[RMDB]
RNA sequence: GGGAACGACUCGAGUAGAGUCGAAAAGAAAGAAAGAAUUGCAAAUGAUGAGUUAAAUCACCAUUGAUAAAAGAAGCUCAAUUGAGCAGUGUUGGCAAUCAAAAACUUCCAUGACUCUGAUGCAAAAUAAGAUGUCCCUAUUCGUAGGGACAUCUUAAAAAGAAACAACAACAACAAC
Reactivity to DMS in 0.01 (KOAc 150mM, MgCl2 10mM, bicine 150mM(pH8.5), 24C), signal-to-noise 4, nucleotides 027 to 126: g000a080a050a080g000a060a070a070g010a080a040u010u020g010c060a060a110a060u010g010a080u000g000a040g000u000u070a040a090a100u000c020a060c080c020a010u000u010g000a090u040a090a100a170a080g000a220a100g000c000u000c010a290a200u050u030g020a030g010c030a090g000u020g000u000u040g000g000c020a030a020u010c070a040a060a040a100a050c130u020u010c020c030a040u000g000a020c060u000c050u000g000a080u000g000c030a040a020a070a070
Reactivity to 2A3 in 0.01 (KOAc 150mM, MgCl2 10mM, bicine 150mM(pH8.5), 24C), signal-to-noise 3, nucleotides 027 to 126: g050a000a060a000g030a030a060a010g070a080a200u050u030g010c000a010a010a110u140g010a040u030g000a020g060u090u180a100a230a120u070c010a040c020c030a010u020u180g060a000u140a030a070a010a050g070a120a030g030c010u000c000a080a300u160u240g000a000g000c060a020g010u030g090u210u040g060g000c050a070a030u080c070a030a090a000a080a220c000u070u000c010c020a050u130g010a020c000u030c010u010g030a030u000g000c030a040a020a000a160
Overview:
Structure probing data (DMS and 2A3) for a 177-nucleotide construct. DMS adducts were read by reverse transcription with MarathonRT. The data come from the RNA Mapping Database (RMDB), libraries RFM100 and RFMREP. 2A3 adducts were read by reverse transcription with SuperScript II with manganese.